[RMDB]
RNA sequence: GGGAACGACUCGAGUAGAGUCGAAAAACGGGCAGUGGCGAUGGCAACGCGGCAGCCGCAGGGUCGACUUCUUCGCAGCCGCAACAGACGGGUGACGGGCAAAGAGGGGAACUCGUUCUGUUGGAAGUCCAGUAUCGAUUUUCGAAUCGAUACUGGAAAAAGAAACAACAACAACAAC
Reactivity to 2A3 in 0.01 (KOAc 150mM, MgCl2 10mM, bicine 150mM(pH8.5), 24C), signal-to-noise 6, nucleotides 027 to 126: a010c030g010g010g000c020a040g030u050g100g010c020g050a070u050g070g000c020a040a050c050g010c000g040g000c020a010g010c020c010g010c040a040g060g000g000u040c020g020a040c010u050u020c000u050u030c090g000c030a020g040c010c020g020c010a010a000c010a020g030a010c000g020g000g000u040g020a030c020g020g050g070c070a080a130a020g070a090g030g030g000g010a010a010c000u000c010g050u180u030c010u020g010u010u000g020g020a050a010g070
Reactivity to DMS in 0.01 (KOAc 150mM, MgCl2 10mM, bicine 150mM(pH8.5), 24C), signal-to-noise 1, nucleotides 027 to 126: a090c110g010g000g010c070a040g030u010g010g000c050g000a100u060g000g000c070a110a120c090g000c080g000g000c040a140g040c070c010g000c070a080g000g010g000u000c040g010a090c050u010u020c020u000u030c040g010c100a100g000c020c010g020c010a040a040c030a020g000a030c020g000g010g000u000g030a190c080g020g000g010c110a060a110a090g000a100g000g000g000g000a130a020c010u000c000g000u020u010c020u010g010u000u000g000g040a130a070g000